Structure probing data (2A3 and DMS) for a 207-nucleotide construct. DMS adducts were read by reverse transcription with MarathonRT. Conditions: 150 mM KOAc, 10 mM MgCl2 and 150 mM bicine (pH 8.5), 24 C. The data come from the RNA Mapping Database (RMDB), library OK3TST.
RNA sequence: GGGAACGACUCGAGUAGAGUCGAAAAAAGAAACUCGAUACACUAUCUACCGUAGAGCGGCACUAGCUAUUGAGCGUCCAGAACUACAGAAGGCACUCACUCCGUCUGAGAGAAUCGUUAUGGACAUCAUUAAGCGUCACUUUGACACCAAGCGUGAUCAGCUUAUCACAUUCGUGUGAUAAGCUGAAAAAGAAACAACAACAACAAC
Reactivity to 2A3 in 0.01 (KOAc 150mM, MgCl2 10mM, bicine 150mM(pH8.5), 24C), signal-to-noise 3, nucleotides 027 to 156: a010a000g150a070a080a000c060u060c040g040a070u100a090c080a050c080u110a060u170c040u060a050c000c040g040u060a020g010a030g070c000g010g000c030a020c050u040a030g000c020u050a030u090u050g030a010g030c090g010u010c010c000a000g010a060a020c010u060a030c050a020g080a070a040g040g000c010a040c110u080c010a030c020u050c040c040g070u030c020u010g060a080g000a010g070a200a060u080c040g030u040u030a020u080g020g010a020c000a020u020c010a020u050u130a080a010g000c020g030u000c010a010c100u100u130u150g040a030c020a010c030c060a070a000g050c040g070u010g050a040
Reactivity to DMS in 0.01 (KOAc 150mM, MgCl2 10mM, bicine 150mM(pH8.5), 24C), signal-to-noise 2, nucleotides 027 to 156: a090a050g000a120a070a040c050u000c030g040a070u000a080c070a060c030u010a040u000c000u000a030c010c000g080u000a130g020a170g070c060g040g000c050a030c210u000a050g030c080u000a050u010u020g070a040g050c110g010u030c010c020a110g000a060a060c020u010a180c040a070g010a160a020g020g000c040a160c040u000c060a080c020u000c030c020g020u000c020u000g000a140g020a140g000a060a090u000c070g010u010u000a040u000g020g010a020c060a080u010c000a080u000u000a030a050g040c030g030u000c010a030c140u000u000u010g030a010c020a060c020c030a030a120g000c060g000u020g030a080